[RMDB]
The record gives the reactivity of an RNA of 177 nucleotides to DMS.
Values cover nucleotides 27 to 126.
The data come from the RNA Mapping Database (RMDB), library TTRDEL.
RNA sequence: GGGAACGACUCGAGUAGAGUCGAAAAGAUAUGGAGCAUCCAUCCUUCGACGAAGUCGGAAACGACAGAGAAGCGAUGGAGUGCUCCUAAGUCAAAAGCACCCCAGACGUUCGCGUCUGGGGUGCAAUCUAACACUCCAGUUCGCUGGAGUGUUAGAAAAAGAAACAACAACAACAAC
Reactivity to DMS in 0.01 (KOAc 150mM, MgCl2 10mM, bicine 150mM(pH8.5), 24C), signal-to-noise 1, nucleotides 027 to 126: g010a080u040a300u000g010g010a000g040c020a090u010c000c000a000u000c010c020u030u010c010g010a210c190g000a070a100g000u000c010g000g010a100a050a210c000g000a030c010a080g010a150g000a000a000g000c180g030a030u000g000g000a010g000u000g000c000u000c000c000u000a000a070g010u020c060a080a090a140a180g010c010a000c000c000c010c030a070g000a060c010g000u000u020c240g030c000g010u000c000u000g030g000g010g000u000g000c000a000a030